[RMDB]
RNA sequence: GGGAACGACUCGAGUAGAGUCGAAAACCCCGGUCAGCCUCCAGAGUUCCUCUUCUUCUUCCUUGCUGAGGCUCUUUCCCCCUGCGGAGAGCUGCUUCUUCUUGUUCUCGAGGGCCUUCCUUCUUCGUACCAUCCCCGUUCGCGGGGAUGAAAAGAAACAACAACAACAAC
Reactivity to DMS in 0.01 (KOAc 150mM, MgCl2 10mM, bicine 150mM(pH8.5), 24C), signal-to-noise 5, nucleotides 027 to 129: c080c010c010c130g010g020u030c000a080g030c030c030u040c050c000a100g000a090g030u040u010c030c030u030c040u020u040c000u020u010c000u000u000c000c000u020u030g010c090u030g010a080g020g020c050u010c000u000u010u030c030c020c020c090c090u040g010c000g070g020a060g030a040g020c090u000g030c050u000u000c050u010u030c060u030u020g020u040u020c030u040c000g020a100g030g000g020c080c060u040u030c000c030u000u000c060u000u000c120g000u000a120c060
Reactivity to 2A3 in 0.01 (KOAc 150mM, MgCl2 10mM, bicine 150mM(pH8.5), 24C), signal-to-noise 3, nucleotides 027 to 129: c000c000c000c000g020g020u090c030a040g030c000c000u020c000c010a020g000a000g090u050u050c020c000u000c000u040u000c000u040u000c000u020u020c010c010u040u050g000c070u090g020a030g020g000c010u010c010u020u030u040c000c000c000c030c020u040g040c060g000g000a050g000a010g050c040u040g020c010u030u030c000u020u000c010u020u120g040u070u040c000u010c000g010a100g010g030g010c010c000u010u020c000c000u030u070c010u020u030c030g050u030a070c030
Structure probing data (DMS and 2A3) for a 170-nucleotide construct. Conditions: 150 mM KOAc, 10 mM MgCl2 and 150 mM bicine (pH 8.5), 24 C. Values are in units of 0.01, from 0 to 300, in steps of 10. For DMS the reverse transcriptase was MarathonRT. DMS (dimethyl sulfate) methylates the pairing face of unpaired adenines and cytosines.